[RMDB]
RNA sequence: GGGAACGACUCGAGUAGAGUCGAAAACGAUGGUAGGAGAGGUUGCAGACUCUGUAACAACCCUUAGGAGAGGGGGCACCCGCAGUAGCUCACAAAUGACACGCACAGCGGUGAUGCAUUCAGAGACUACCUAGACUAGAUUCGUCUAGUCUAGGUAAAAAGAAACAACAACAACAAC
Reactivity to 2A3 in 0.01 (KOAc 150mM, MgCl2 10mM, bicine 150mM(pH8.5), 24C), signal-to-noise 9, nucleotides 027 to 126: c050g030a050u090g040g050u060a030g020g060a050g000a020g060g030u030u040g000c030a020g040a220c030u010c010u050g030u050a050a040c030a030a060c020c000c020u030u060a160g070g100a130g050a020g040g000g000g010g000c010a010c000c000c010g000c010a030g020u090a030g010c020u030c050a080c040a040a150a100u180g040a050c030a030c180g020c010a020c020a070g020c010g000g030u050g030a140u030g000c020a020u020u050c010a010g010a010g020a080c030
Reactivity to DMS in 0.01 (KOAc 150mM, MgCl2 10mM, bicine 150mM(pH8.5), 24C), signal-to-noise 9, nucleotides 027 to 126: c100g000a070u010g000g000u010a030g000g000a060g030a060g000g010u000u010g000c070a090g010a160c050u000c010u000g000u010a060a070c140a090a130c030c000c020u000u000a110g010g020a130g010a040g010g000g000g010g010c030a030c030c010c010g000c030a090g010u010a090g010c030u010c140a090c200a070a060a100u030g000a070c200a100c160g010c040a050c040a080g010c020g000g000u000g000a110u010g000c020a100u020u010c050a030g000a070g000a120c150
This 177-nucleotide RNA was probed chemically with 2A3 and DMS. The reactions ran in a buffer of 150 mM KOAc, 10 mM MgCl2 and 150 mM bicine (pH 8.5), at 24 C.